[RMDB]
RNA sequence: GGGAACGACUCGAGUAGAGUCGAAAAUGGCUCUGAGGGCAAAGUCAGAGAAAACCGGAAGGCCAGUGUCCUCUCGCAUGCAGCCGUUCUUCAGAUGUUGUUUUGGCGCUCGCCGCCUUAGCACGCUGAUAGCGACUGUACUGUCGUCUGUGAAGGCGUGUCUCAAUUUGUUCGCAAAUUGAGACACAAAAGAAACAACAACAACAAC
Reactivity to DMS in 0.01 (KOAc 150mM, MgCl2 10mM, bicine 150mM(pH8.5), 24C), signal-to-noise 1, nucleotides 027 to 156: u010g030g040c010u000c020u010g000a300g000g040g040c040a060a070a180g020u010c040a130g020a200g010a060a030a160a050c000c000g040g010a070a080g010g030c030c010a080g050u000g000u000c010c030u000c030u000c030g000c060a160u000g030c010a010g010c000c010g000u000u010c040u000u010c010a060g000a000u010g070u000u000g030u000u000u000u010g000g010c040g020c030u000c180g020c170c020g060c010c000u000u010a030g000c020a010c000g040c020u030g000a040u000a060g040c010g010a040c010u000g000u000a010c100u000g050u000c030g030u010c050u000g000u000g010a100a070g010g000c060
Reactivity to 2A3 in 0.01 (KOAc 150mM, MgCl2 10mM, bicine 150mM(pH8.5), 24C), signal-to-noise 4, nucleotides 027 to 156: u040g020g000c040u040c020u110g030a040g030g060g040c050a080a080a040g060u080c090a020g050a020g000a140a060a020a070c030c020g060g050a060a040g040g010c010c020a020g050u020g070u030c010c010u050c000u000c020g030c010a010u040g000c000a000g000c020c000g010u040u040c050u030u000c010a030g070a300u070g030u260u010g010u010u110u020u010g010g000c000g020c040u110c180g200c200c000g000c030c000u000u010a000g010c000a000c000g000c010u000g000a010u000a000g000c000g020a030c010u010g010u030a030c080u040g110u140c010g040u050c070u080g140u070g120a080a030g060g010c070
Notes:
This 207-nucleotide RNA was probed chemically with DMS and 2A3. For DMS, 2,205 sequencing reads were counted.